The record gives the reactivity of an RNA of 207 nucleotides to 2A3 and DMS. For DMS the reverse transcriptase was MarathonRT. For 2A3 the reverse transcriptase was SuperScript II with manganese. For 2A3, 2,867 sequencing reads were counted.
RNA sequence: GGGAACGACUCGAGUAGAGUCGAAAAUUCAUUUUUUGAGACGUUAUUAUGUCUGAUCUGACAAAAGUUAGCACUUUUGAGGAACGCAACAUUUCAUUUCGUAUGAAAAAUACGGAAACCGGAAAAGAAUCAACUAUGAUGUCUGAUCUGAUGAGUGUAGCAAAAAUGUAUUCGUACAUUUUUGCUAAAAAGAAACAACAACAACAAC
Reactivity to 2A3 in 0.01 (KOAc 150mM, MgCl2 10mM, bicine 150mM(pH8.5), 24C), signal-to-noise 4, nucleotides 027 to 156: u040u010c010a010u030u030u030u030u050u070g090a020g000a010c010g030u030u040a070u110u030a090u200g030u020c120u040g010a020u010c020u050g040a060c010a010a050a000a020g020u060u070a090g060c080a040c050u040u040u040u070g090a100g040g050a040a060c080g020c100a040a080c010a100u070u110u090c010a040u010u020u020c060g000u040a000u000g040a120a090a110a090a020u020a030c010g000g020a030a040a050c170c080g100g090a040a030a020a020g060a030a080u070c020a010a050c020u040a030u090g040a010u020g020u000c020u020g050a010u000c000u000g020a010u040g010a040g070u120g040
Reactivity to DMS in 0.01 (KOAc 150mM, MgCl2 10mM, bicine 150mM(pH8.5), 24C), signal-to-noise 3, nucleotides 027 to 156: u000u000c000a010u000u000u000u000u030u000g010a060g020a060c030g020u000u000a080u000u020a070u000g000u000c020u010g010a240u000c070u010g020a160c020a020a050a070a140g010u000u010a170g000c170a240c020u010u010u000u000g010a300g040g030a070a060c020g030c100a060a090c090a160u010u000u020c020a220u000u000u000c080g010u000a020u000g000a030a110a100a100a090u000a000c000g010g000a020a040a120c110c040g060g030a050a100a100a120g000a080a090u000c030a050a050c070u000a030u010g000a080u000g000u000c000u000g000a090u000c010u000g010a030u000g010a050g060u010g010
Conditions: 150 mM KOAc, 10 mM MgCl2 and 150 mM bicine (pH 8.5), 24 C.